[RMDB]
RNA sequence: GGGAACGACUCGAGUAGAGUCGAAAAUAUCGCUGUCGGGACCCACCCGCACCGCGCCGGCGGCUUCGGCUUGGCCGAGCGUGUCCAACUGCUCGCCACCGACCAGGGCCACCAGGUCGGUGCGCGCGAUAGCAUUGCUGUUCGCAGCAAUGCUAUCAAAAGAAACAACAACAACAAC
Reactivity to 2A3 in 0.01 (KOAc 150mM, MgCl2 10mM, bicine 150mM(pH8.5), 24C), signal-to-noise 3, nucleotides 027 to 126: u170a020u060c030g010c060u080g120u160c000g020g000g070a100c020c010c000a110c020c040c000g020c020a010c000c020g010c020g020c020c010g010g000c010g010g000c010u020u040c110g090g000c020u110u240g170g000c040c010g010a040g010c020g010u020g080u040c030c010a130a110c080u160g040c020u040c020g000c010c010a010c000c010g010a020c010c020a060g000g040g000c060c010a070c020c020a040g010g010u010c020g010g000u000g000c020g010c000g000c040
Reactivity to DMS in 0.01 (KOAc 150mM, MgCl2 10mM, bicine 150mM(pH8.5), 24C), signal-to-noise 4, nucleotides 027 to 126: u000a090u000c100g010c070u010g030u010c020g010g010g000a120c030c050c030a230c060c000c010g010c090a040c100c020g010c040g020c050c030g020g020c020g010g000c050u000u010c080g020g010c040u000u010g030g020c030c020g010a060g010c020g020u000g010u010c100c100a110a100c160u000g020c060u000c000g010c020c010a040c050c010g000a040c040c000a080g000g010g010c150c250a080c010c010a080g010g010u000c020g020g020u000g000c090g010c050g010c160